RNA sequence: GGGAACGACUCGAGUAGAGUCGAAAAACGCUAUACGUAGCGAAGACCUGUACCCAUCACACUUGUACUUCUUAGCAUGUGGUACAGGGAUGCUCAGCAGUGCAAGUGUGACAGGUAUGGUGUUUAACUGUAUGAUGACGUUCGCGUCAUCAUACAGAAAAGAAACAACAACAACAAC
Reactivity to DMS in 0.01 (KOAc 150mM, MgCl2 10mM, bicine 150mM(pH8.5), 24C), signal-to-noise 3, nucleotides 027 to 126: a090c010g020c000u010a020u020a150c170g030u000a000g050c000g000a130a090g000a060c020c020u010g020u000a000c000c000c030a250u000c010a010c020a010c000u000u000g000u010a000c010u000u000c010u000u000a030g000c020a010u000g060u000g000g000u000a070c170a130g030g010g000a020u000g010c000u000c060a010g020c050a020g000u000g000c010a020a000g000u000g000u010g010a010c060a090g000g010u000a000u000g010g010u040g000u000u030u010a070a170
Reactivity to 2A3 in 0.01 (KOAc 150mM, MgCl2 10mM, bicine 150mM(pH8.5), 24C), signal-to-noise 6, nucleotides 027 to 126: a000c010g000c010u030a030u030a090c270g140u040a010g000c010g040a090a000g040a040c000c000u010g010u010a020c000c000c010a010u010c000a000c000a000c000u010u000g000u030a010c000u000u030c010u020u010a010g010c010a020u030g100u180g290g090u230a070c030a050g030g090g010a000u000g000c010u010c010a000g000c000a000g000u000g000c000a010a000g000u000g000u000g000a000c000a000g000g010u000a010u020g080g010u130g060u040u050u080a100a070